[RMDB]
RNA sequence: GGGAACGACUCGAGUAGAGUCGAAAACAAAAGAGGGUAUAGAGGAAUUAUUAGCAGGAACUAUAAGGGGAAGAUUCUGUGUACCAUACCCAUUUGCCUUGUUAAAAUGCACAAAGUGGUGCUGGUAUACAGCGGCCAUAAACAACGAGUCAGGAAAGUAUGCCUGCUAGUUCGCUAGCAGGCAUACAAAAGAAACAACAACAACAAC
Reactivity to 2A3 in 0.01 (KOAc 150mM, MgCl2 10mM, bicine 150mM(pH8.5), 24C), signal-to-noise 1, nucleotides 027 to 156: c000a000a020a000a000g010a010g010g140g000u100a070u100a100g030a010g050g070a020a050u150u100a040u020u170a050g050c030a000g050g000a010a000c020u090a040u090a300a100g080g000g020g000a020a010g010a050u120u000c010u000g060u000g000u020a000c000c000a000u010a020c000c000c010a000u040u010u070g000c030c000u010u000g010u060u060a240a110a040a010u150g090c020a070c030a140a150a000g070u130g050g000u010g030c020u000g050g000u010a040u010a140c000a020g000c000g030g000c000c000a070u160a000a170a000c010a040a020c050g000a000g040u050c020a000g130g000a050a000a130